The data come from the RNA Mapping Database (RMDB), library OK1LIB. The record gives the reactivity of an RNA of 177 nucleotides to DMS and 2A3. For DMS the reverse transcriptase was MarathonRT. The RNA was probed in 150 mM KOAc, 10 mM MgCl2 and 150 mM bicine (pH 8.5) at 24 C.
RNA sequence: GGGAACGACUCGAGUAGAGUCGAAAAAGACAUCGUUCCAAUCAAAUAGGUAGUUAAACAUGAUGUAUGAGAGGAACGAAAAAAUCUUGGUCCCAACCAUUAGUUUUCUCAUUGUCAUCAUAAGAGGCAUCAGGCAGGGAUUCGUCCCUGCCUGAUGAAAAGAAACAACAACAACAAC
Reactivity to DMS in 0.01 (KOAc 150mM, MgCl2 10mM, bicine 150mM(pH8.5), 24C), signal-to-noise 3, nucleotides 027 to 126: a000g000a000c200a300u000c020g000u010u000c020c020a010a300u000c000a010a070a040u070a020g000g000u000a150g000u040u030a060a090a100c110a050u030g000a050u020g040u000a190u000g000a020g000a300g010g000a030a000c020g020a000a000a060a030a220a150u000c020u000u000g000g000u020c010c000c010a140a090c300c040a060u060u040a070g000u000u000u030u000c000u000c040a090u010u020g000u020c050a050u010c100a090u040a110a060g000a040g000g000
Reactivity to 2A3 in 0.01 (KOAc 150mM, MgCl2 10mM, bicine 150mM(pH8.5), 24C), signal-to-noise 2, nucleotides 027 to 126: a010g010a000c050a100u010c010g000u000u040c000c000a010a030u070c010a020a090a130u160a120g010g190u120a040g210u150u220a150a130a000c080a060u160g010a020u100g050u130a040u010g040a010g010a000g000g020a000a000c000g090a010a070a000a000a000a000u000c000u000u020g030g000u040c010c020c030a000a100c000c010a110u120u180a060g120u070u050u130u000c010u000c010a110u100u080g160u110c040a110u020c030a000u030a150a150g020a030g190g000
For 2A3, 877 sequencing reads were counted.